[RMDB]
RNA sequence: GGGAACGACUCGAGUAGAGUCGAAAACAACGCCUGUGCUUUUACCUUGCACAACUUUCAUAUAUUCGCUUGUAACCUCAAACGCUUCAUUUCCGCAAAUAUAUGUUUUUGGUUUAUCCAUGCAACCGACAAUGGCAAGUGAUAAAGCAACUACUGAGCUCUUCCUAGGAUUCGUCCUAGGAAGAGCAAAAGAAACAACAACAACAAC
Reactivity to 2A3 in 0.01 (KOAc 150mM, MgCl2 10mM, bicine 150mM(pH8.5), 24C), signal-to-noise 2, nucleotides 027 to 156: c020a000a120c070g090c010c060u090g020u030g010c000u070u000u040u080a050c000c000u010u030g010c030a030c020a240a110c060u090u170u020c050a000u040a020u000a010u100u070c040g000c010u090u140g070u130a080a110c030c020u140c080a220a210a050c060g010c090u100u030c090a110u070u150u150c050c080g010c040a010a030a020u060a000u000a030u050g000u000u030u040u050u080g010g010u030u110u090a040u050c030c030a050u200g030c030a040a090c020c050g030a040c080a120a060u000g020g000c000a000a000g040u000g110a080u080a070a010a010g010c030a050a040c030u090a010c050u080g030a000
Conditions: 150 mM KOAc, 10 mM MgCl2 and 150 mM bicine (pH 8.5), 24 C. The record gives the reactivity of an RNA of 207 nucleotides to 2A3. Reactivities are rounded to 0.1 and cut off at 0 and 3. For 2A3 the reverse transcriptase was SuperScript II with manganese. Source: RMDB library OK3TST, as collected in RNAgym.